[RMDB]
RNA sequence: GGGAACGACUCGAGUAGAGUCGAAAAGGAAGCGAAGAGCUUCCAAGAUUUGUGUCAGUCCUGCCGCGAGAGCGAGAGACGCCAUAAAGGGAGCGCGGGCUCUGAAGUACCGGCUAAAGCGUCCAGCCACUCAUGAGUAAUUCGUUACUCAUGAGUGAAAAGAAACAACAACAACAAC
Reactivity to 2A3 in 0.01 (KOAc 150mM, MgCl2 10mM, bicine 150mM(pH8.5), 24C), signal-to-noise 9, nucleotides 027 to 126: g000g010a010a000g000c010g030a090a050g040a110g120c000u000u000c000c000a000a000g020a020u150u160u170g080u020g030u040c010a020g030u000c010c010u040g040c020c010g030c030g030a050g010a010g080c020g000a040g010a010g010a080c020g000c010c010a080u200a110a120a050g120g040g020a070g020c060g000c020g010g040g000c030u030c070u100g050a090a020g020u040a090c010c010g010g020c030u050a120a060a000g020c010g010u000c020c010a020g020c000
Reactivity to DMS in 0.01 (KOAc 150mM, MgCl2 10mM, bicine 150mM(pH8.5), 24C), signal-to-noise 9, nucleotides 027 to 126: g000g010a010a000g000c000g000a130a130g000a300g010c000u000u000c000c000a090a060g000a100u010u010u020g010u010g010u000c040a100g000u000c010c010u010g020c030c010g000c060g000a120g010a110g000c030g000a120g010a130g000a060c040g010c020c050a100u040a080a110a120g010g010g000a050g010c030g010c050g000g010g010c020u010c110u020g010a080a060g010u010a060c050c020g000g000c030u000a050a090a110g010c030g000u000c010c020a110g010c120
Description
An RNA of 177 nucleotides, treated with 2A3 and DMS and read out base by base. Conditions: 150 mM KOAc, 10 mM MgCl2 and 150 mM bicine (pH 8.5), 24 C. The data come from the RNA Mapping Database (RMDB), libraries RFM100 and RFMREP.